[RMDB]
RNA sequence: GGGAACGACUCGAGUAGAGUCGAAAACGCCGAUGCCGACGUGCGCCGACAGCGCUAUGCCGAGCGGCUCUCGAAGCGCUCGAUGGACAGCCUCGGGCGGUGCAUCCGCGACCAGCGGCGGGAGCUGGAAAAGACCCUGCGCGUGAGCGUCUACGGGUAAGUGAUUAUGUUUCGACAUAAUCACUUAAAAAGAAACAACAACAACAAC
Reactivity to 2A3 in 0.01 (KOAc 150mM, MgCl2 10mM, bicine 150mM(pH8.5), 24C), signal-to-noise 3, nucleotides 027 to 156: c040g020c020c010g030a030u070g050c050c030g030a080c040g100u070g030c040g020c000c000g040a020c030a050g030c030g020c110u090a060u220g080c040c020g020a020g040c040g180g030c020u000c000u020c040g170a200a020g030c010g010c010u020c010g090a100u220g020g030a090c050a060g060c030c000u040c020g000g050g000c020g020g000u050g000c010a060u030c000c010g020c000g020a100c020c040a040g020c020g080g000c040g010g030g010a050g000c010u060g030g000a060a040a000a020g060a040c000c000c000u010g000c020g000c000g020u100g100a060g020c010g020u020c050u090a050c050g000g030g030
Reactivity to DMS in 0.01 (KOAc 150mM, MgCl2 10mM, bicine 150mM(pH8.5), 24C), signal-to-noise 2, nucleotides 027 to 156: c000g010c020c020g010a070u010g060c050c010g000a050c070g050u000g020c020g000c000c010g040a110c060a110g000c300g010c010u020a070u000g000c010c000g000a080g030c000g030g020c000u000c000u030c090g020a140a080g030c030g060c010u020c010g000a110u000g020g000a100c080a150g000c010c030u000c030g000g000g000c020g000g030u010g010c040a070u000c000c040g020c000g000a130c050c040a090g030c020g030g030c040g010g000g000a080g020c000u010g030g020a130a080a080a090g010a110c000c010c010u000g020c010g070c020g030u000g010a260g030c020g030u000c030u000a070c160g020g060g010